[RMDB]
RNA sequence: GGGAACGACUCGAGUAGAGUCGAAAAUUGACCGUGUGAUCGUCAACGCCGGAAUCGGCAAGGGUGCCCGGCUGGGCUCGGGCAAGCUGUGGGCGAACAAGGCAACCAUCGAAACCAACCUGGUCGCGUGAACCAGAAGGUUCGCCUUCUGGUUCACAAAAGAAACAACAACAACAAC
Reactivity to 2A3 in 0.01 (KOAc 150mM, MgCl2 10mM, bicine 150mM(pH8.5), 24C), signal-to-noise 2, nucleotides 027 to 126: u060u060g080a070c000c080g010u030g000u020g100a160u040c000g010u040c030a020a030c080g000c010c000g090g070a150a230u230c010g050g000c030a040a010g090g050g040u040g000c010c020c010g000g040c040u290g130g250g030c070u040c000g010g000g000c010a020a020g100c020u070g000u070g180g020g000c000g010a010a010c020a010a020g020g040c010a010a020c000c020a040u100c040g030a110a000a050c030c000a000a050c020c050u060g000g050u040c020g000c060
Reactivity to DMS in 0.01 (KOAc 150mM, MgCl2 10mM, bicine 150mM(pH8.5), 24C), signal-to-noise 2, nucleotides 027 to 126: u010u000g010a130c020c020g030u000g010u000g000a060u000c060g000u020c040a100a180c190g030c000c000g000g020a120a060u000c030g020g050c030a120a120g000g020g020u000g000c020c000c000g010g000c030u010g020g010g020c110u020c010g010g000g000c030a040a070g030c060u000g000u000g010g000g010c030g000a040a050c140a020a150g010g010c040a110a120c040c020a080u010c090g010a080a070a140c100c070a100a120c120c050u010g030g010u000c030g020c220